[RMDB]
An RNA of 207 nucleotides, treated with DMS and 2A3 and read out base by base. For 2A3, 2,598 sequencing reads were counted. The reactions ran in a buffer of 150 mM KOAc, 10 mM MgCl2 and 150 mM bicine (pH 8.5), at 24 C. For 2A3 the reverse transcriptase was SuperScript II with manganese. It was measured as part of the RMDB library OK3TST.
RNA sequence: GGGAACGACUCGAGUAGAGUCGAAAAAUGGCUCGACGGCACCGAAACGUACAUACCCAAAGAACUCGUAUCGUUGAGCGGCAAUCUACCGGCGGCCUUUGUGUCUGCCCUCGCGAAAAACACACCCAACGUCGAGGACGUCGAUACUAUGAAGCUAGAUCUAAGUCAGAUUCGUCUGACUUAGAUCAAAAGAAACAACAACAACAAC
Reactivity to DMS in 0.01 (KOAc 150mM, MgCl2 10mM, bicine 150mM(pH8.5), 24C), signal-to-noise 2, nucleotides 027 to 156: a080u000g000g020c030u000c010g040a090c000g000g030c060a170c020c050g020a080a060a080c080g020u010a040c090a150u000a210c040c030c050a070a030a180g020a070a080c050u000c060g030u000a030u010c060g000u010u000g020a110g040c020g030g020c020a110a150u000c080u000a080c060c010g020g020c020g020g010c000c010u010u050u000g020u000g000u000c030u000g030c000c010c030u000c030g000c030g020a020a080a080a090a120c070a130c040a120c000c010c030a070a190c030g020u000c020g020a170g010g020a060c030g050u000c040g000a080u000a030c040u000a120u000g020a100a080g010c050u000a220
Reactivity to 2A3 in 0.01 (KOAc 150mM, MgCl2 10mM, bicine 150mM(pH8.5), 24C), signal-to-noise 4, nucleotides 027 to 156: a010u070g030g000c020u010c050g010a020c000g020g060c050a040c040c060g030a060a050a010c040g050u110a040c040a110u150a110c010c050c050a060a120a020g070a040a050c050u100c120g020u050a060u070c010g020u060u160g010a020g030c020g020g000c050a050a090u060c060u130a070c030c050g030g010c000g000g040c030c000u070u090u150g050u040g010u000c030u060g010c020c010c010u010c010g000c000g070a000a020a050a080a040c110a020c020a060c040c070c010a060a000c020g120u140c040g040a000g010g000a000c000g000u070c020g000a020u020a110c050u080a070u210g100a070a010g000c060u000a040